[RMDB]
RNA sequence: GGGAACGACUCGAGUAGAGUCGAAAAGUAAAAGCGCAAAAGAAGCUCAGUGCAAGAGCAAGACCUAAGUAUAAAAAUACAGCCAUGAGCUCAAACGCGGAACAAAACCGCGAAAUGGCAAAAAAAACAACAUAGAUAUGUUCGCAUAUCUAUGUUGAAAAGAAACAACAACAACAAC
Reactivity to DMS in 0.01 (KOAc 150mM, MgCl2 10mM, bicine 150mM(pH8.5), 24C), signal-to-noise 3, nucleotides 027 to 126: g010u010a050a080a120a120g000c040g010c050a070a060a070a040g010a130a130g000c010u010c060a080g020u000g020c080a070a070g010a080g010c010a080a100g000a110c030c020u010a070a080g030u020a100u000a020a050a080a050a070u000a040c090a080g000c010c010a020u000g020a100g000c030u020c100a040a080a190c000g010c020g030g010a050a070c140a060a050a100a100c000c000g000c000g000a000a030a010u000g010g010c000a000a000a020a060a040a070a040a090
Reactivity to 2A3 in 0.01 (KOAc 150mM, MgCl2 10mM, bicine 150mM(pH8.5), 24C), signal-to-noise 2, nucleotides 027 to 126: g020u050a020a040a080a000g040c050g000c060a070a080a020a050g100a110a010g020c000u010c060a070g030u060g150c030a050a040g000a020g040c010a000a010g050a030c000c010u070a090a030g030u030a090u130a270a170a040a060a010u090a030c010a010g000c000c010a010u020g020a020g000c000u010c060a000a030a000c010g000c000g010g020a090a020c070a100a100a040a000c000c010g020c000g010a080a100a020u040g000g000c000a000a000a000a030a000a030a030a090